RNA sequence: GGGAACGACUCGAGUAGAGUCGAAAACGCAAAGCUGCAGCGCGGCGCUCUGGAGGCCUUGCCCCGCGCACUGCUCUUUACAUGGCCCGAGGUGAGGGCACUUCGCGGGCAGUGCUGCGGCCUCGUGAAACUGCCCCUAAGUUCGCUUAGGGGCAAACGAGUGAAUGAUGUUCGCAUCAUUCACUCGAAAAGAAACAACAACAACAAC
Reactivity to 2A3 in 0.01 (KOAc 150mM, MgCl2 10mM, bicine 150mM(pH8.5), 24C), signal-to-noise 2, nucleotides 027 to 156: c050g000c020a000a060a000g020c010u060g020c000a000g040c010g020c020g180g080c110g000c020u030c060u070g090g000a020g000g050c010c020u010u030g000c060c000c000c000g000c010g000c010a050c030u040g070c020u070c030u090u280u150a050c020a130u190g050g000c000c050c020g020a040g000g060u070g020a080g010g000g060c080a120c030u010u060c020g010c080g000g020g000c020a010g020u000g010c020u010g000c010g010g000c010c000u000c010g000u020g040a090a060a030c020u040g000c010c000c000c000u000a000a000g000u000u090c200g080c170u000u000a000g000g020g000g000c000a000a000a000